[RMDB]
RNA sequence: GGGAACGACUCGAGUAGAGUCGAAAAUUAAAGUGCGUAGCACACACUCAGACUAAGUCUGACACACACAUACGCUAAUCAUCUCUGUGUGUGUUCGAGAUAUCGAUAAGUGUAUGAGAUGAAAAAACCCUUUUAAGAUCUUCGGAUCUUAAAAGGGAAAAGAAACAACAACAACAAC
Reactivity to DMS in 0.01 (KOAc 150mM, MgCl2 10mM, bicine 150mM(pH8.5), 24C), signal-to-noise 3, nucleotides 027 to 126: u010u010a050a090a130g040u020g000c000g010u000a050g000c110a070c100a040c060a060c110u000c020a030g020a020c130u000a090a130g030u000c000u010g010a040c020a000c000a000c000a010c000a030u000a030c020g000c010u010a110a090u000c010a020u000c010u000c100u010g000u010g010u000g000u000g000u000u010c090g000a020g000a100u000a070u000c020g000a060u000a040a090g040u000g010u010a090u000g010a010g020a010u000g000a010a040a050a090a100a090
Reactivity to 2A3 in 0.01 (KOAc 150mM, MgCl2 10mM, bicine 150mM(pH8.5), 24C), signal-to-noise 3, nucleotides 027 to 126: u140u070a130a050a050g210u150g080c020g030u040a010g000c030a020c000a000c000a000c040u040c020a020g010a060c080u250a290a130g050u000c000u010g000a010c010a000c000a000c010a000c000a010u030a030c020g010c070u070a070a030u010c000a010u010c000u000c000u020g000u000g000u000g010u000g010u020u010c000g010a000g040a080u140a050u200c020g000a010u010a140a060g000u000g020u030a050u050g020a010g000a010u030g000a060a010a000a010a010a040
Chemical mapping of a 177-nucleotide RNA with DMS and 2A3. The RNA was probed in 150 mM KOAc, 10 mM MgCl2 and 150 mM bicine (pH 8.5) at 24 C.